Structure probing data (2A3 and DMS) for a 177-nucleotide construct. The DMS profile rests on 1,516 reads. Source: RMDB library OK1LIB, as collected in RNAgym. The 2A3 profile rests on 1,645 reads.
[RMDB]
RNA sequence: GGGAACGACUCGAGUAGAGUCGAAAAUCCUCAUCCCAACAAUUUUGCGUCUACUUUCCAUCUGCACUUUCUCCUUUCACUGAUAUUUUGUAGCGUCAAAGGUGGAGGGCAACCAAUGAGGAGUUCAUCACGCCGAAAAUUUCGAUUUUCGGCGUGAAAAAGAAACAACAACAACAAC
Reactivity to 2A3 in 0.01 (KOAc 150mM, MgCl2 10mM, bicine 150mM(pH8.5), 24C), signal-to-noise 3, nucleotides 027 to 126: u020c000c000u010c010a080u040c030c010c000a050a040c070a110a130u020u050u030u160g000c010g030u030c010u010a020c010u060u060u040c010c010a060u010c060u070g030c070a020c060u080u040u000c020u030c020c000u000u050u010c020a020c120u050g090a040u060a130u150u130u070u120g060u090a030g080c000g020u090c070a050a000a010g060g010u020g020g000a000g000g000g040c010a050a020c020c030a050a040u070g010a030g040g000a010g010u040u020c000a040
Reactivity to DMS in 0.01 (KOAc 150mM, MgCl2 10mM, bicine 150mM(pH8.5), 24C), signal-to-noise 2, nucleotides 027 to 126: u000c000c000u000c060a100u000c030c000c040a100a100c140a100a050u000u000u000u010g000c040g020u000c030u030a100c060u000u000u000c000c040a020u030c030u020g000c000a030c000u000u000u020c010u010c000c060u000u000u000c030a150c160u000g000a090u030a000u000u030u000u070g020u000a050g000c160g000u020c120a030a050a100g050g040u030g000g000a120g020g040g030c300a110a040c080c000a000a100u030g000a050g020g020a040g000u050u000c070a190